Record summary:
The record gives the reactivity of an RNA of 177 nucleotides to 2A3 and DMS. The 2A3 profile rests on 1,070 reads. For 2A3 the reverse transcriptase was SuperScript II with manganese. DMS adducts were read by reverse transcription with MarathonRT.

RNA sequence: GGGAACGACUCGAGUAGAGUCGAAAAUGGCCAUCGCAGCGCAGGAGGAACUGUUGCAACGAAUCAGACGUGACUGUUAUGGGCCCGUCACUGCCUUCAGAGACUUUUUCAAACUCAAGGAAAGAGCCACUUUUGGUCUCUUCGGAGACCAAAAGUGAAAAGAAACAACAACAACAAC
Reactivity to 2A3 in 0.01 (KOAc 150mM, MgCl2 10mM, bicine 150mM(pH8.5), 24C), signal-to-noise 2, nucleotides 027 to 126: u070g040g010c010c000a040u040c030g010c030a070g010c000g000c020a010g000g070a020g060g120a030a020c040u030g040u030u170g000c010a050a010c060g130a050a090u030c000a000g000a030c000g020u020g010a040c000u020g040u100u100a150u150g050g040g050c000c030c010g010u010c030a040c080u080g010c020c000u060u100c070a020g040a040g010a300c040u090u000u000u030u020c080a010a050a060c020u000c070a070a000g080g050a080a050a030g040a000g000c060
Reactivity to DMS in 0.01 (KOAc 150mM, MgCl2 10mM, bicine 150mM(pH8.5), 24C), signal-to-noise 1, nucleotides 027 to 126: u030g000g010c010c050a010u080c060g000c040a080g000c060g030c000a080g000g000a110g000g010a130a090c030u040g000u020u010g030c080a170a070c180g030a150a130u000c000a110g020a040c050g020u000g000a040c000u000g000u000u010a050u100g010g000g000c020c000c040g000u030c040a030c040u030g040c050c020u000u000c090a030g000a050g000a170c040u070u000u060u000u000c060a070a030a090c090u030c040a070a090g000g000a010a040a050g010a070g020c010